Source: RMDB library OK2TRN, as collected in RNAgym. An RNA of 177 nucleotides, treated with 2A3 and DMS and read out base by base. For 2A3, 1,334 sequencing reads were counted. The DMS profile rests on 1,138 reads. The reactions ran in a buffer of 150 mM KOAc, 10 mM MgCl2 and 150 mM bicine (pH 8.5), at 24 C.
[RMDB]
RNA sequence: GGGAACGACUCGAGUAGAGUCGAAAAUCAGAAGUAUAUCUCUCCAAAAUAACACAAGGUGAGAUAACUGCUCACAUCUAACUGUUGGAGAGGACAAUGGUUGUUUUGAAGGGCUGAUAUACAAUGAGUAGUGAUUCGAUUUCGAUCGAAUCACUACAAAAGAAACAACAACAACAAC
Reactivity to 2A3 in 0.01 (KOAc 150mM, MgCl2 10mM, bicine 150mM(pH8.5), 24C), signal-to-noise 2, nucleotides 027 to 126: u070c010a000g120a260a010g050u040a060u000a030u110c000u000c000u000c020c020a010a060a040a080u120a160a040c070a020c030a200a000g080g000u030g000a020g000a030u060a070a130c010u090g020c020u000c000a010c000a060u070c050u080a040a020c040u010g040u070u010g030g030a110g000a050g060g010a000c010a020a000u050g010g030u000u020g010u050u030u070u020g130a070a000g040g060g010c090u070g060a010u000a000u010a090c030a050a060u060g010a030
Reactivity to DMS in 0.01 (KOAc 150mM, MgCl2 10mM, bicine 150mM(pH8.5), 24C), signal-to-noise 2, nucleotides 027 to 126: u000c020a040g000a110a200g020u000a030u000a000u010c000u040c000u000c010c000a010a020a050a020u000a040a040c110a140c150a070a080g020g010u000g000a020g020a070u000a100a200c300u020g000c000u000c000a050c000a110u000c060u020a050a110c240u000g000u000u000g000g000a110g030a090g000g000a040c060a040a110u000g000g000u000u000g010u000u000u000u010g000a070a060g000g020g020c210u020g000a050u000a010u000a020c040a050a180u000g010a110